[RMDB]
RNA sequence: GGGAACGACUCGAGUAGAGUCGAAAAAUGGUAGAAUGCAGAGGAGAAGCAAGGAAAGAUAAAGGUAGACUAGGGUCAGUCAUGAGAAUUUUCUUUCCCUGAAAUGUGGUUUGAGGCUGGCAUCCUUGGUGUCUCACCCCAAACUUUUUCCUUACCAGUACUGCGUAAUAUUCGUAUUACGCAGUACAAAAGAAACAACAACAACAAC
Reactivity to DMS in 0.01 (KOAc 150mM, MgCl2 10mM, bicine 150mM(pH8.5), 24C), signal-to-noise 2, nucleotides 027 to 156: a120u010g000g020u020a060g010a090a080u000g000c030a070g020a050g020g000a120g000a090a050g000c040a060a080g010g000a020a070a070g020a060u000a030a070a070g010g020u010a060g000a050c050u000a080g000g010g000u010c060a100g010u000c030a060u020g000a120g030a050a130u000u010u000u000c040u010u010u000c010c000c010u020g010a030a040a070u000g030u010g000g010u000u000u000g020a040g020g030c020u010g010g010c030a010u010c030c080u000u000g060g030u000g040u000c020u000c100a050c040c000c020c020a040a040a060c060u020u000u000u010u000c020c020u000u020a080c080c060a210
Reactivity to 2A3 in 0.01 (KOAc 150mM, MgCl2 10mM, bicine 150mM(pH8.5), 24C), signal-to-noise 5, nucleotides 027 to 156: a010u070g010g000u020a040g020a210a040u090g040c050a020g030a040g060g040a040g000a040a030g030c030a020a010g040g000a060a000a020g030a020u160a100a060a020g050g030u070a020g020a030c040u050a030g020g050g040u060c060a020g030u020c020a060u110g050a010g070a140a050u060u020u050u040c000u000u050u020c010c000c030u020g050a060a100a060u160g030u090g030g060u030u030u090g020a020g000g000c030u000g010g000c010a060u080c010c080u060u110g050g020u050g050u030c020u040c050a030c000c000c010c020a030a070a060c000u070u020u020u050u040c010c000u060u060a070c020c060a000